[RMDB]
An RNA of 177 nucleotides, treated with 2A3 and DMS and read out base by base. The RNA was probed in 150 mM KOAc, 10 mM MgCl2 and 150 mM bicine (pH 8.5) at 24 C. For 2A3, 5,968 sequencing reads were counted. Reactivities are given for positions 27 through 126. High 2A3 reactivity points to a flexible backbone, as in loops and unpaired stretches.

RNA sequence: GGGAACGACUCGAGUAGAGUCGAAAAGAUAUGGACUGAGGGAGCUUUCAGUCGGAAACGACUGGAAGCAUCGAUCUCACAUGUCCUAAGUCAAACACUUUCGCCUAGUUCGCUAGGCGAAAGUGAAUCCUUAAUUAUACUUCGGUAUAAUUAAGGAAAAAGAAACAACAACAACAAC
Reactivity to 2A3 in 0.01 (KOAc 150mM, MgCl2 10mM, bicine 150mM(pH8.5), 24C), signal-to-noise 1, nucleotides 027 to 126: g000a010u080a040u150g000g010a010c030u040g010a040g000g030g020a050g000c000u000u010u000c000a000g010u000c020g000g010a100a060a020c000g010a000c010u010g050g010a000a010g000c020a020u030c020g020a030u020c000u000c020a140c060a140u230g000u000c000c000u020a110a030g060u040c040a040a100a030c010a010c000u000u010u020c000g000c000c010u010a020g000u060u070c300g010c130u000a000g000g000c000g000a000a000a000g000u000g000a000a000
Reactivity to DMS in 0.01 (KOAc 150mM, MgCl2 10mM, bicine 150mM(pH8.5), 24C), signal-to-noise 3, nucleotides 027 to 126: g010a050u000a300u000g000g000a020c020u010g000a040g010g000g000a040g000c000u000u000u000c000a000g010u000c000g000g000a070a090a210c010g000a010c000u000g010g010a000a010g020c010a050u010c150g020a150u000c000u010c000a110c280a080u010g010u010c000c020u000a040a170g000u010c030a170a120a260c020a000c010u000u000u000c000g000c000c000u000a020g010u000u010c250g020c000u000a010g000g000c000g000a000a000a000g020u000g000a030a070